Chemical mapping of a 177-nucleotide RNA with DMS and 2A3. For DMS, 1,829 sequencing reads were counted. Conditions: 150 mM KOAc, 10 mM MgCl2 and 150 mM bicine (pH 8.5), 24 C. Values are in units of 0.01, from 0 to 300, in steps of 10.
RNA sequence: GGGAACGACUCGAGUAGAGUCGAAAAGAUAUGGACUCGGUGUUGUCAGCUAAUGGAUCGGAAACGAUCCACUAGCUUGGAUUUACACGCGAGUCCUAAGUCAAAGAUCAGUGUUCGCACUGAUCAAGAUUUACCCGUUCUUCGGAACGGGUAAAUCAAAAGAAACAACAACAACAAC
Reactivity to DMS in 0.01 (KOAc 150mM, MgCl2 10mM, bicine 150mM(pH8.5), 24C), signal-to-noise 2, nucleotides 027 to 126: g000a070u000a300u000g000g020a000c000u010c020g020g000u000g000u000u010g000u000c000a060g030c010u000a000a010u000g000g000a000u000c000g000g000a160a120a260c000g000a020u010c000c000a000c020u000a000g000c000u020u000g050g020a050u020u000u000a030c020a010c000g000c010g020a020g010u000c000c000u000a000a120g040u000c070a100a150a180g060a010u000c000a000g010u010g010u010u010c170g030c010a010c010u010g000a000u010c040a060a110
Reactivity to 2A3 in 0.01 (KOAc 150mM, MgCl2 10mM, bicine 150mM(pH8.5), 24C), signal-to-noise 2, nucleotides 027 to 126: g040a030u150a030u200g000g000a020c010u000c020g070g000u020g000u000u040g020u020c020a010g000c000u010a010a010u010g010g000a010u000c000g040g080a100a090a080c000g020a000u000c000c010a000c000u010a010g000c000u020u070g100g030a050u300u300u130a000c020a010c050g300c010g030a000g010u040c000c020u000a020a010g000u020c050a000a100a050g000a000u000c000a000g000u030g150u050u250c300g080c090a000c000u000g020a000u000c000a000a000